RNA sequence: GGGAACGACUCGAGUAGAGUCGAAAAUGCCGGCGGGACCUCGGUGAGGGAAUCGGUCACCGAUGCGUCGUAUGCUUGGCCACGGUUCUUGCACCCCCUGUGCUGCACGGCUGGUCGGCGGCGGCUCCGACUCGUAAGAUUUCGAUCUUACGAGUCGAAAAGAAACAACAACAACAAC
Reactivity to DMS in 0.01 (KOAc 150mM, MgCl2 10mM, bicine 150mM(pH8.5), 24C), signal-to-noise 2, nucleotides 027 to 126: u040g010c030c000g000g000c030g000g020g010a040c030c030u000c040g010g000u000g000a020g030g000g050a150a050u030c110g020g000u000c040a040c010c010g000a010u010g010c140g010u000c040g000u050a100u030g000c000u010u020g010g010c010c110a070c050g000g000u010u010c080u000u000g010c060a150c040c020c010c010c020u010g020u030g070c050u010g010c080a070c090g000g000c030u000g000g010u010c050g020g010c030g030g000c010g010g000c010u000c030
Reactivity to 2A3 in 0.01 (KOAc 150mM, MgCl2 10mM, bicine 150mM(pH8.5), 24C), signal-to-noise 7, nucleotides 027 to 126: u130g010c010c000g010g020c020g020g060g040a040c010c000u000c010g020g020u030g020a040g050g120g070a080a180u170c080g100g020u020c010a000c010c010g010a040u100g030c110g010u040c010g050u090a060u180g040c020u120u300g010g000c000c000a020c020g030g010u070u040c010u040u140g010c020a040c010c000c000c000c040u020g040u070g040c030u030g000c030a030c110g060g000c030u040g050g020u060c010g020g020c000g010g020c000g020g000c000u010c030